RNA sequence: GGGAACGACUCGAGUAGAGUCGAAAACAAACACCAGCGAAAAGGAAGAAAAACCAAAACGUGAACUACAUGACGAAACACGAAGGCUGGUGUAAAGCGUCAAGUAACAAAAACAAAACAAACAAAAAUCCACUACUAUAUUCGUAUAGUAGUGGAUAAAAGAAACAACAACAACAAC
Reactivity to 2A3 in 0.01 (KOAc 150mM, MgCl2 10mM, bicine 150mM(pH8.5), 24C), signal-to-noise 8, nucleotides 027 to 126: c020a000a070a000c010a000c000c000a000g010c020g070a050a070a070a060g080g030a120a120g110a130a150a050a010a020c030c030a040a030a010a070c020g020u030g050a060a020c030u120a030c090a150u090g060a020c040g030a060a100a000c020a000c000g010a040a010g190g000c000u000g000g000u000g000u010a020a040a000g070c020g020u030c050a080a060g080u100a130a100c090a120a120a070a010a010c050a030a100a050a020c060a040a140a010c030a030a120a050a010
Reactivity to DMS in 0.01 (KOAc 150mM, MgCl2 10mM, bicine 150mM(pH8.5), 24C), signal-to-noise 4, nucleotides 027 to 126: c060a160a180a090c010a010c000c030a010g010c000g000a130a120a110a070g020g010a030a090g010a040a120a100a170a060c030c040a050a090a080a090c040g010u000g010a200a120c140u010a020c100a050u050g000a040c030g010a060a070a170c010a010c000g000a090a120g000g020c020u010g000g030u010g000u010a020a040a130g000c000g020u000c000a030a040g000u020a050a100c200a010a060a060a070a050c240a080a080a060a040c180a090a120a040c130a030a030a030a050
Conditions: 150 mM KOAc, 10 mM MgCl2 and 150 mM bicine (pH 8.5), 24 C.
This 177-nucleotide RNA was probed chemically with 2A3 and DMS.
For 2A3 the reverse transcriptase was SuperScript II with manganese.
For 2A3, 13,621 sequencing reads were counted.
Values cover nucleotides 27 to 126.
The data come from the RNA Mapping Database (RMDB), library OK1LIB.